Structure probing data (2A3) for a 207-nucleotide construct. The 2A3 profile rests on 714 reads. The data come from the RNA Mapping Database (RMDB), library OK3TST. Reactivities are rounded to 0.1 and cut off at 0 and 3. The reactions ran in a buffer of 150 mM KOAc, 10 mM MgCl2 and 150 mM bicine (pH 8.5), at 24 C.

RNA sequence: GGGAACGACUCGAGUAGAGUCGAAAAUGGUACGAACGACAUCGUUACUGGCAGCCUUGAGUUUAAGGUUUACGAUUCUGACAGUGUCACCGUCGAAAGCCUUGAACCUCUGGCAUUCACUACCGACCUGCAGUCAACUGGCAGCACUGGCAGUCCGUCCGAUAGGAUCCUUCGGGAUCCUAUCGGAAAAAGAAACAACAACAACAAC
Reactivity to 2A3 in 0.01 (KOAc 150mM, MgCl2 10mM, bicine 150mM(pH8.5), 24C), signal-to-noise 1, nucleotides 027 to 156: u070g000g000u000a000c000g000a080a020c080g130a040c070a090u050c030g030u050u170a030c060u100g030g000c040a050g030c010c030u160u190g050a060g060u000u000u000a010a000g020g000u010u000u040a050c000g000a000u000u040c010u080g020a040c060a190g110u090g000u300c020a010c030c030g000u000c030g040a030a000a000g030c000c000u010u010g030a020a000c000c080u000c000u030g000g010c020a070u030u100c040a020c100u040a000c000c030g030a040c000c020u030g010c020a000g040u050c030a100a100c080u050g060g030c040a000g000c040a010c040u060g000g000c000a000g030u000c030c090g000